[RMDB]
RNA sequence: GGGAACGACUCGAGUAGAGUCGAAAAUCUGUUUAUAGCCCUCAAUUGUAUAAACUUUGUGUGUGUGAAAUUGAAACUCCGGCUUAGCACACUUUCCGGUUCGGUUUAUGCAUUGGUCUACAAAAACGAUUUACUCGAGUUUCGACUUGAGUGGAUCAAAAGAAACAACAACAACAAC
Reactivity to 2A3 in 0.01 (KOAc 150mM, MgCl2 10mM, bicine 150mM(pH8.5), 24C), signal-to-noise 9, nucleotides 027 to 126: u010c000u020g090u030u120u060a150u090a060g030c010c020c000u050c050a070a100u180u060g010u030a020u010a020a010a010c000u030u140u090g050u020g000u000g000u000g010u020g130a130a160a180u170u140g060a150a080a040c060u030c020c000g010g000c020u040u070a020g000c000a000c000a000c000u080u110u040c010c010g030g010u040u090c020g000g010u010u010u010a010u010g000c000a000u000u040g010g010u010c030u060a080c080a040a110a010a020a020c060
Reactivity to DMS in 0.01 (KOAc 150mM, MgCl2 10mM, bicine 150mM(pH8.5), 24C), signal-to-noise 7, nucleotides 027 to 126: u020c060u020g020u010u010u010a110u010a070g000c050c020c030u020c180a060a050u010u020g020u010a010u000a010a010a020c010u000u010u020g020u010g000u000g020u000g000u000g010a030a090a160u030u030g010a130a110a090c130u020c030c020g010g000c050u000u010a190g000c010a020c020a010c020u000u030u010c020c010g000g010u010u010c070g000g000u010u010u010a010u000g000c000a020u010u010g010g000u000c040u000a060c140a040a050a050a060a080c150